RNA sequence: GGGAACGACUCGAGUAGAGUCGAAAAGAUAUGGAAGGGACAUUUCAUAUCCACUCAGGGAGAAACAAUCGGAAACGAUUGAAUUUCUUUGAUCUGGCGUGGAUAUGAAAUGUCCCUUCCUAAGUCACCUUUAUUACCACUUCGGUGGUAAUAAAGGAAAAGAAACAACAACAACAAC
Reactivity to DMS in 0.01 (KOAc 150mM, MgCl2 10mM, bicine 150mM(pH8.5), 24C), signal-to-noise 1, nucleotides 027 to 126: g010a050u000a300u020g000g000a010a020g000g020g010a020c010a000u000u000u000c000a010u010a000u000c000c000a010c000u000c020a010g010g000g000a010g000a020a010a120c000a010a010u000c010g030g000a200a150a250c000g030a010u000u000g020a100a170u000u000u000c000u010u010u020g000a030u010c010u000g010g000c220g020u000g030g000a000u020a010u000g030a000a010a000u000g000u020c000c000c000u000u010c000c000u000a010a060g000u000c030a170